Structure probing data (2A3 and DMS) for a 177-nucleotide construct.
Conditions: 150 mM KOAc, 10 mM MgCl2 and 150 mM bicine (pH 8.5), 24 C.
2A3 adducts were read by reverse transcription with SuperScript II with manganese.
It was measured as part of the RMDB library OK2TST.
Reactivities are given for positions 27 through 126.
RNA sequence: GGGAACGACUCGAGUAGAGUCGAAAAAGGCCGAACGGUCGAUCAUCGGCUAUACCAUUUUCAACGACUGGUCCGCACGGGACCUGCAGAUGCUGGAGGGCCAGCUGCGCAUCGGACAGGCCAAGGGCAGCCGAUCUUAGUUCGCUAAGAUCGGCUGAAAAGAAACAACAACAACAAC
Reactivity to 2A3 in 0.01 (KOAc 150mM, MgCl2 10mM, bicine 150mM(pH8.5), 24C), signal-to-noise 1, nucleotides 027 to 126: a000g070g000c000c000g030a090a040c090g070g120u090c020g000a050u080c070a040u050c050g000g010c030u030a040u120a090c000c010a060u140u110u060u190c080a060a050c070g090a070c040u030g040g000u040c000c020g060c160a140c080g100g000g040a070c000c000u010g000c000a040g060a160u100g000c020u030g010g070a090g020g050g040c010c020a040g000c020u070g030c020g010c010a020u040c020g040g060a020c020a100g030g000c020c050a030a080g000g040g000
Reactivity to DMS in 0.01 (KOAc 150mM, MgCl2 10mM, bicine 150mM(pH8.5), 24C), signal-to-noise 2, nucleotides 027 to 126: a130g010g020c000c010g060a040a190c170g040g000u000c050g000a140u020c130a080u010c010g000g020c020u010a110u000a210c010c020a170u000u010u020u000c150a100a090c110g000a050c070u000g020g000u020c030c000g000c130a100c160g010g000g000a050c030c020u000g000c050a160g010a080u000g020c050u020g010g000a150g000g000g000c050c020a020g020c040u000g010c130g020c100a030u000c010g020g000a130c090a090g000g010c030c060a100a090g010g000g010
For 2A3, 1,205 sequencing reads were counted.